[RMDB]
RNA sequence: GGGAACGACUCGAGUAGAGUCGAAAAGAUAUGGACUUGGAUUUACCGAACUACGUCUGCAUCGGAAACGAUGUUGACGCGGUUGUCAGUCCUAAGUCAAACUCAUCUACGUUCGCGUAGAUGAGAACAAACUAGUAUAGUUCGCUAUACUAGUUUGAAAAGAAACAACAACAACAAC
Reactivity to DMS in 0.01 (KOAc 150mM, MgCl2 10mM, bicine 150mM(pH8.5), 24C), signal-to-noise 9, nucleotides 027 to 126: g000a090u000a170u010g010g010a010c000u000u010g010g010a030u000u000u010a060c080c220g010a060a030c060u010a300c000g000u000c000u000g000c000a000u000c000g010g000a100a070a170c010g010a000u000g010u000u000g000a010c000g010c020g010g010u000u000g000u000c070a050g000u000c010c000u000a030a070g010u000c020a100a110a170c010u000c000a010u000c000u000a000c000g010u000u010c220g020c010g020u000a000g000a000u000g000a000g000a070a140
Reactivity to 2A3 in 0.01 (KOAc 150mM, MgCl2 10mM, bicine 150mM(pH8.5), 24C), signal-to-noise 9, nucleotides 027 to 126: g050a020u110a060u190g040g010a010c020u100u200g140g020a040u250u180u160a030c030c030g090a210a150c120u100a020c170g000u000c000u000g000c000a000u000c000g000g020a040a020a020c010g000a010u000g000u010u020g000a000c000g000c020g040g000u010u020g020u020c010a000g000u000c000c000u010a050a000g020u010c020a050a020a150c000u000c000a000u000c000u000a010c010g030u030u070c300g010c010g180u000a000g000a010u000g000a000g000a000a010

The record gives the reactivity of an RNA of 177 nucleotides to DMS and 2A3. For DMS, 54,001 sequencing reads were counted. For DMS the reverse transcriptase was MarathonRT. Conditions: 150 mM KOAc, 10 mM MgCl2 and 150 mM bicine (pH 8.5), 24 C. It was measured as part of the RMDB library TTRDEL.